This 177-nucleotide RNA was probed chemically with DMS and 2A3. The reactions ran in a buffer of 150 mM KOAc, 10 mM MgCl2 and 150 mM bicine (pH 8.5), at 24 C. For DMS the reverse transcriptase was MarathonRT. For DMS, 1,025 sequencing reads were counted.
[RMDB]
RNA sequence: GGGAACGACUCGAGUAGAGUCGAAAAGUCGGUCUCGUUUACCGACGGCUCGACGCGCAACUACAAGCUCGCAUACCGGCCGUUCUUCGUGACGGGCGACCGUGUGCCGGACGGCAAGGGCGGCACACCGACUAAUCGGCUUCGGCCGAUUAGUCGGAAAAGAAACAACAACAACAAC
Reactivity to DMS in 0.01 (KOAc 150mM, MgCl2 10mM, bicine 150mM(pH8.5), 24C), signal-to-noise 2, nucleotides 027 to 126: g000u000c000g000g000u000c060u040c170g000u000u000u010a020c040c040g000a060c000g010g000c300u020c020g010a020c030g000c130g020c170a140a170c040u000a090c120a100a060g000c170u000c030g010c040a090u000a140c080c030g000g030c000c010g020u000u000c070u010u010c130g040u010g000a080c070g000g000g010c120g000a100c070c030g010u000g010u000g020c000c010g040g010a070c030g000g000c190a080a050g000g010g030c030g000g000c050a020c100a080
Reactivity to 2A3 in 0.01 (KOAc 150mM, MgCl2 10mM, bicine 150mM(pH8.5), 24C), signal-to-noise 2, nucleotides 027 to 126: g000u000c000g000g020u090c090u040c130g070u200u270u110a050c000c000g030a000c000g010g000c000u030c020g020a020c010g080c010g010c080a130a140c040u130a070c050a050a060g020c090u050c060g060c020a040u050a100c040c000g080g010c000c030g020u040u020c000u090u030c030g030u050g040a040c000g010g000g100c040g050a050c020c090g070u060g050u020g090c000c020g080g070a080c040g060g000c050a060a100g000g020g040c000g020g000c030a020c000a020
For 2A3 the reverse transcriptase was SuperScript II with manganese.